[RMDB]
RNA sequence: GGGAACGACUCGAGUAGAGUCGAAAAUCGUGUACGUGUUCGUGUUCGUUCGAACUCACUCACUCGAGUACGUGUUCGAGAGAGUGUGAGAGUUCGAACACACUCGAACACUCACGAGAGUACGUACGAGAGAGAGUGUGUGUUCGUACUCACACACCCUUCUAAGGGGGUUCGCCCCCUUAGAAGGAAAAGAAACAACAACAACAAC
Reactivity to 2A3 in 0.01 (KOAc 150mM, MgCl2 10mM, bicine 150mM(pH8.5), 24C), signal-to-noise 3, nucleotides 027 to 156: u040c000g000u010g030u070a110c120g000u010g010u010u030c020g000u010g020u040u100c110g000u010u000c000g000a000a010c010u030c020a020c010u000c000a040c000u000c000g010a010g050u100a080c070g190u210g080u150u010c020g000a010g000a000g010a010g020u060g040u110g080a100g000a010g030u000u030c020g040a050a010c030a000c000a000c000u010c020g000a010a010c000a000c000u000c000a000c000g020a020g000a000g000u010a000c060g030u070a040c110g040a060g000a020g020a010g010a020g200u040g000u010g000u000g020u040u030c010g020u000a010c010u040c020a000c000a000c000a000c000